Structure probing data (2A3) for a 177-nucleotide construct. It was measured as part of the RMDB library OK1LIB. 2A3 adducts were read by reverse transcription with SuperScript II with manganese. The reactions ran in a buffer of 150 mM KOAc, 10 mM MgCl2 and 150 mM bicine (pH 8.5), at 24 C.
[RMDB]
RNA sequence: GGGAACGACUCGAGUAGAGUCGAAAAGAAACAGGCGCCUGUAAACCGCACUCUAAACCAACAAAUAGAGGAAGAAACUGAUGUUACUCAAAGCAAGAGCGCCAUAGAGUAACAAAAGAAAACAAAACGUCAUCAUAGCUUUCGAGCUAUGAUGACGAAAAGAAACAACAACAACAAC
Reactivity to 2A3 in 0.01 (KOAc 150mM, MgCl2 10mM, bicine 150mM(pH8.5), 24C), signal-to-noise 1, nucleotides 027 to 126: g020a000a140a000c020a000g030g030c000g020c020c000u080g050u120a090a040a130c040c080g000c000a000c000u010c010u040a130a150a050c120c080a000a120c140a030a250a010u160a010g030a030g120g000a070a070g020a000a080a000c050u030g030a020u020g070u000u000a000c030u020c040a060a070a000g000c020a070a070g040a030g230c050g000c000c000a020u050a070g010a000g000u000a010a010c000a010a010a000a010g030a000a080a000a000c050a030a170a040a040